An RNA of 177 nucleotides, treated with DMS and 2A3 and read out base by base. The RNA was probed in 150 mM KOAc, 10 mM MgCl2 and 150 mM bicine (pH 8.5) at 24 C.
RNA sequence: GGGAACGACUCGAGUAGAGUCGAAAAACUGCGGUAUUCGUACCGCAGUACAUAAAAAGGAUAAAAUACCAGUAGCCCGAAACGCAAGCGAGCACUAGUGGCGCAAGAACCACUUCGGUGGUUCUAAGCGUAGCAGAACUUUCGAGUUCUGCUACGCAAAAGAAACAACAACAACAAC
Reactivity to DMS in 0.01 (KOAc 150mM, MgCl2 10mM, bicine 150mM(pH8.5), 24C), signal-to-noise 2, nucleotides 027 to 126: a080c010u010g000c000g050g000u010a000u000u020c110g020u010a000c010c040g000c000a000g010u010a000c130a030u010a080a080a120a020a080g000g010a080u000a080a020a100a090u010a120c010c040a070g020u010a100g000c010c010c010g030a030a110a040c170g000c160a070a030g020c010g010a010g010c090a120c050u000a070g030u010g020g010c050g030c120a110a010g000a020a000c000c000a000c000u000u010c210g120g010u000g000g000u000u000c010u000a050a090
Reactivity to 2A3 in 0.01 (KOAc 150mM, MgCl2 10mM, bicine 150mM(pH8.5), 24C), signal-to-noise 2, nucleotides 027 to 126: a000c000u010g030c000g020g010u030a050u040u150c200g020u040a000c000c000g000c000a010g000u020a010c020a020u270a040a090a040a010a030g050g010a040u140a120a220a090a050u140a150c020c010a040g080u030a020g070c020c020c000g020a080a110a000c010g000c090a040a010g050c010g060a030g020c020a010c080u040a030g000u060g150g040c020g000c090a060a020g000a000a000c000c020a020c090u050u040c210g090g000u000g010g000u010u000c000u000a030a010